An RNA of 177 nucleotides, treated with DMS and 2A3 and read out base by base. The reactions ran in a buffer of 150 mM KOAc, 10 mM MgCl2 and 150 mM bicine (pH 8.5), at 24 C. DMS adducts were read by reverse transcription with MarathonRT. It was measured as part of the RMDB library OK1LIB.

[RMDB]
RNA sequence: GGGAACGACUCGAGUAGAGUCGAAAAGGAGGCUUUUCACGGCCUGGACGUGAAAUUCCACACACAGGCUUUUUCCGCUCACGGCAGCGGGAGAGAAGUCAUUGAUGCCAUGUGCCAUGCCACCAUAGCUAGCGGAUAAUUUCGAUUAUCCGCUAGCAAAAGAAACAACAACAACAAC
Reactivity to DMS in 0.01 (KOAc 150mM, MgCl2 10mM, bicine 150mM(pH8.5), 24C), signal-to-noise 2, nucleotides 027 to 126: g050g020a020g000g010c050u000u000u000u040c040a090c100g010g000c020c030u000g000g000a110c210g000u010g000a150a170a100u020u010c050c060a150c030a110c090a180c040a030g000g000c000u010u010u000u040u000c000c000g010c000u010c010a280c160g030g010c050a070g000c030g000g000g000a070g010a090g020a000a030g000u000c040a110u010u030g000a130u070g000c010c020a010u010g050u030g000c020c040a040u000g010c030c010a160c060c010a100u030a170
Reactivity to 2A3 in 0.01 (KOAc 150mM, MgCl2 10mM, bicine 150mM(pH8.5), 24C), signal-to-noise 4, nucleotides 027 to 126: g130g020a060g030g010c020u040u020u040u000c030a030c050g010g010c000c030u030g000g050a030c070g000u000g070a020a020a080u140u070c040c010a020c000a000c000a000c010a030g000g000c000u090u010u000u020u010c000c000g010c000u000c020a250c060g220g000c120a000g020c000g000g020g010a010g000a000g000a000a020g000u020c070a090u040u130g100a080u080g030c010c030a060u110g010u020g040c020c010a040u080g010c010c010a050c000c010a030u030a030